Background
The record gives the reactivity of an RNA of 177 nucleotides to DMS. Reactivities are given for positions 27 through 126. The RNA was probed in 150 mM KOAc, 10 mM MgCl2 and 150 mM bicine (pH 8.5) at 24 C.
[RMDB]
RNA sequence: GGGAACGACUCGAGUAGAGUCGAAAACAGCUCCGACGGGAUGGCACUCGUGACUAGUUCCGCCGCCUUGUAUCACACGAGCGUGUGUAUCCCCGUGCGACUCAAGGCGGCGGAACUAGCGACGAGCAAACGUACGUACCUUCGGGUACGUACGUUUAAAAGAAACAACAACAACAAC
Reactivity to DMS in 0.01 (KOAc 150mM, MgCl2 10mM, bicine 150mM(pH8.5), 24C), signal-to-noise 2, nucleotides 027 to 126: c090a150g000c060u000c020c020g000a090c170g010g000g020a050u020g000g010c160a220c000u010c000g020u000g000a090c000u000a020g010u000u000c000c000g020c000c000g000c000c000u010u000g000u000a040u000c000a020c000a000c010g030a050g020c200g020u010g010u040g000u050a120u010c010c010c000c010g050u010g020c070g000a040c050u000c000a010a010g000g010c000g030g010c010g000g020a000a000c000u000a000g010c160g000a020c040g010a000g000c240